Record summary
An RNA of 177 nucleotides, treated with 2A3 and DMS and read out base by base. For DMS, 2,489 sequencing reads were counted. For 2A3 the reverse transcriptase was SuperScript II with manganese. Values cover nucleotides 27 to 126. Conditions: 150 mM KOAc, 10 mM MgCl2 and 150 mM bicine (pH 8.5), 24 C. It was measured as part of the RMDB library RFM100.
[RMDB]
RNA sequence: GGGAACGACUCGAGUAGAGUCGAAAAAUUUGCAGACUAAGGAACUGGCCUCCAAAGAGACUUGAUUUUUGUGUUACUUUCCAGCCCCUUCUCCCCCCCUUUCAUCCUCCAAGAACCAUUGUAAAACUAAUUCUGUGCUUUUCGAAGCACAGAAUUAAAAAGAAACAACAACAACAAC
Reactivity to 2A3 in 0.01 (KOAc 150mM, MgCl2 10mM, bicine 150mM(pH8.5), 24C), signal-to-noise 2, nucleotides 027 to 126: a000u120u100u100g000c030a020g060a090c010u100a090a120g070g000a050a080c000u000g060g000c000c000u050c010c010a010a140a020g060a040g020a040c030u040u130g040a060u090u070u030u060u150g140u020g020u080u020a050c030u060u020u050c000c000a000g000c030c000c000c030u020u020c020u010c020c020c010c000c000c000c010u030u040u040c010a020u010c000c020u040c010c000a030a050g040a040a010c020c010a080u080u080g080u150a000a000a000a190c030
Reactivity to DMS in 0.01 (KOAc 150mM, MgCl2 10mM, bicine 150mM(pH8.5), 24C), signal-to-noise 2, nucleotides 027 to 126: a110u050u000u030g020c020a040g000a110c060u010a060a080g010g010a100a050c160u000g010g000c020c030u000c040c030a030a060a070g000a150g030a090c010u000u010g010a110u040u000u000u010u030g010u000g020u010u000a040c030u000u000u010c030c010a100g000c020c050c020c000u000u000c020u000c020c000c020c000c000c010c100u000u030u010c070a030u000c030c010u000c020c070a040a040g010a050a050c120c100a050u000u010g010u020a100a050a140a080c210